[RMDB]
RNA sequence: GGGAACGACUCGAGUAGAGUCGAAAAUUCGGCUUCGGAUUCCUCAGCCCCCAGCCCCCCGAAGCAGUCGGGAUCGGGCCUGUACGCAGAACCUCGAUCCCCCUCCUGGGCCGACGCAAGUUGGUCCGAAUGGACCACACUUCGGUGUGGUCCAUUCAAAAGAAACAACAACAACAAC
Reactivity to 2A3 in 0.01 (KOAc 150mM, MgCl2 10mM, bicine 150mM(pH8.5), 24C), signal-to-noise 6, nucleotides 027 to 126: u070u040c040g050g010c020u050u050c020g080g040a090u070u050c020c010u070c070a080g010c010c000c000c000c000a020g030c020c000c000c010c000c010g010a020a010g030c050a020g110u130c070g000g000g000a010u010c000g010g000g030c030c000u010g020u040a020c250g000c050a010g010a080a050c010c000u030c030g000a000u010c000c000c000c000c000u030c010c010u010g010g000g000c000c000g010a000c000g010c040a080a070g000u010u000g000g000u000c000c000
Reactivity to DMS in 0.01 (KOAc 150mM, MgCl2 10mM, bicine 150mM(pH8.5), 24C), signal-to-noise 2, nucleotides 027 to 126: u010u020c070g000g010c060u000u000c010g010g000a140u040u000c020c000u000c100a130g000c080c020c030c020c030a080g000c020c010c020c030c010c010g020a070a070g010c110a070g000u040c140g000g000g020a010u000c000g000g000g010c190c010u000g000u030a040c180g040c020a000g010a060a060c180c000u010c000g000a000u010c000c010c010c030c010u000c030c030u030g010g020g000c020c010g000a010c010g010c300a060a100g020u000u000g010g000u000c010c020